Source information:
The record gives the reactivity of an RNA of 207 nucleotides to DMS and 2A3. The RNA was probed in 150 mM KOAc, 10 mM MgCl2 and 150 mM bicine (pH 8.5) at 24 C. DMS adducts were read by reverse transcription with MarathonRT. Source: RMDB library RNAMAK, as collected in RNAgym.
[RMDB]
RNA sequence: GGGAACGACUCGAGUAGAGUCGAAAAACCUUUGUGUACGGUUGGCCGGUCAAGCAACAGCUAUGGGAAAAGUCGCCCAUUGGGCAAUGAUACCCAUAGACAUGCUUGGAUUUCCAACGGUACACUCUGGUAAAAGCAUAGCGUUCGCGCUAUGCAAUCUAUGCCUAGAGUUCGCUCUAGGCAUAGAAAAAGAAACAACAACAACAAC
Reactivity to DMS in 0.01 (KOAc 150mM, MgCl2 10mM, bicine 150mM(pH8.5), 24C), signal-to-noise 2, nucleotides 027 to 156: a050c000c000u000u000u010g000u000g020u030a000c000g010g060u000u000g000g020c080c070g000g020u020c040a040a040g010c000a050a140c110a100g000c000u000a030u000g010g020g020a080a100a080a300g000u010c070g020c000c010c010a300u000u000g030g010g000c000a000a010u010g000a300u000a120c000c000c000a020u000a000g020a030c050a300u000g010c020u000u020g020g010a090u000u000u000c000c000a000a020c000g030g040u000a010c000a000c010u000c020u000g010g000u000a060a060a150a140g020c000a010u000a010g010c010g020u000u000c300g040c020g010c000u000a000u000g000c000a020a000
Reactivity to 2A3 in 0.01 (KOAc 150mM, MgCl2 10mM, bicine 150mM(pH8.5), 24C), signal-to-noise 7, nucleotides 027 to 156: a010c000c000u000u010u000g010u000g000u000a060c170g140g010u010u000g030g010c100c100g090g020u050c000a010a010g000c020a010a110c030a220g040c000u010a000u000g000g000g050a060a160a020a050g080u060c050g020c020c000c050a300u220u300g000g000g000c010a020a040u080g030a040u130a130c000c000c000a000u010a000g040a160c020a030u040g000c000u010u010g060g030a020u060u060u030c000c000a000a010c040g090g000u000a000c000a000c000u000c000u000g000g010u060a090a120a040a030g000c000a000u000a000g010c010g050u050u090c300g000c010g010c120u000a000u000g000c000a000a000